[RMDB]
Chemical mapping of a 177-nucleotide RNA with 2A3 and DMS. Source: RMDB library OK1LIB, as collected in RNAgym. Reactivities are given for positions 27 through 126. For DMS, 11,186 sequencing reads were counted.
RNA sequence: GGGAACGACUCGAGUAGAGUCGAAAACACGCAGUCGUCGCCACUGAAAGAUUGAUAGGCCGCCGGGAAAUACACGUGGAGAUGUUCGCUUCGGAUAGUUCAGGCCGUGUAGGAACUUGCCUAGCUACGAGUACGUGAUAUUCGUAUCACGUACUCGAAAAGAAACAACAACAACAAC
Reactivity to 2A3 in 0.01 (KOAc 150mM, MgCl2 10mM, bicine 150mM(pH8.5), 24C), signal-to-noise 7, nucleotides 027 to 126: c050a000c050g060c040a010g050u050c020g050u050c040g040c040c010a040c050u090g060a060a090a070g120a150u140u180g040a060u080a090g020g030c020c000g020c020c010g040g020g030a020a070a030u140a040c030a010c040g050u090g030g020a090g010a070u070g060u080u070c020g000c070u050u060c020g050g030a090u080a100g080u080u060c040a030g040g080c000c030g010u030g020u020a070g020g050a050a040c000u040u070g040c000c000u040a080g010c010u040a040
Reactivity to DMS in 0.01 (KOAc 150mM, MgCl2 10mM, bicine 150mM(pH8.5), 24C), signal-to-noise 5, nucleotides 027 to 126: c060a150c070g010c080a050g010u010c030g030u010c030g000c010c010a090c070u020g010a110a110a080g000a130u040u010g010a090u010a090g010g000c020c030g000c050c020g000g000g000a040a080a050u030a020c080a050c040g000u010g010g000a100g010a110u010g010u010u010c050g020c050u000u000c060g000g000a050u020a020g030u010u010c060a060g000g010c050c110g010u000g010u010a060g010g000a120a060c070u000u010g010c030c030u000a040g000c080u010a110